[RMDB]
This 177-nucleotide RNA was probed chemically with DMS. For DMS, 1,112 sequencing reads were counted.

RNA sequence: GGGAACGACUCGAGUAGAGUCGAAAAGAUAUGGAGCGAUCUGAACAUUCACACCAGACAUGAUCCCAGCUCGGAAACGAGCUGUGAGAUCAACAGCUGGGUGAAUGUUCAGAUCGCUCCUAAGUCAGACAAGCAUAUGGUUCGCCAUAUGCUUGUCAAAAGAAACAACAACAACAAC
Reactivity to DMS in 0.01 (KOAc 150mM, MgCl2 10mM, bicine 150mM(pH8.5), 24C), signal-to-noise 1, nucleotides 027 to 126: g000a090u020a300u000g010g030a030g010c050g000a000u010c000u010g040a040a020c000a030u000u000c010a000c010a130c010c000a000g010a020c130a230u010g010a010u010c000c020c020a040g030c010u000c000g030g000a110a140a290c010g010a010g020c010u010g020u020g000a130g010a020u010c010a030a040c300a170g000c000u010g000g010g030u000g010a020a000u000g010u000u000c000a000g000a000u000c000g020c020u020c000c000u000a000a030g030u010c040a070

For DMS the reverse transcriptase was MarathonRT.